Chemical mapping of a 207-nucleotide RNA with 2A3.
[RMDB]
RNA sequence: GGGAACGACUCGAGUAGAGUCGAAAAUUUUGUCUCCUAUUUUUAUUUUUCCUACUAUGUUUGUCGAGGAUAAAAUACAGCACUGUGUGCCAAGUCAUAAUCACUUUUCAUUUGAGACUUAAUUAAAAUGCCUUUAUUUUAAUGAUAUAUUUGGCUACUAUCCUCUGGUAUUCGUACCAGAGGAUAGAAAAGAAACAACAACAACAAC
Reactivity to 2A3 in 0.01 (KOAc 150mM, MgCl2 10mM, bicine 150mM(pH8.5), 24C), signal-to-noise 1, nucleotides 027 to 156: u150u150u180u110g000u000c050u000c000c020u100a210u020u210u000u060u080a050u000u060u040u130u000c020c000u000a240c020u070a100u300g160u130u300u080g020u050c070g000a000g000g000a020u100a100a080a000a000u100a000c050a070g110c040a000c130u150g000u050g000u040g140c020c070a120a030g050u090c030a080u100a120a100u050c030a040c170u190u240u220u080c080a100u050u080u300g030a000g000a010c000u020u060a030a020u000u170a000a220a110a000u150g000c080c000u190u280u060a160u070u070u100u170a300a080u300g050a030u120a030u030a040u110u000u000g000g000c000u030a030
Conditions: 150 mM KOAc, 10 mM MgCl2 and 150 mM bicine (pH 8.5), 24 C.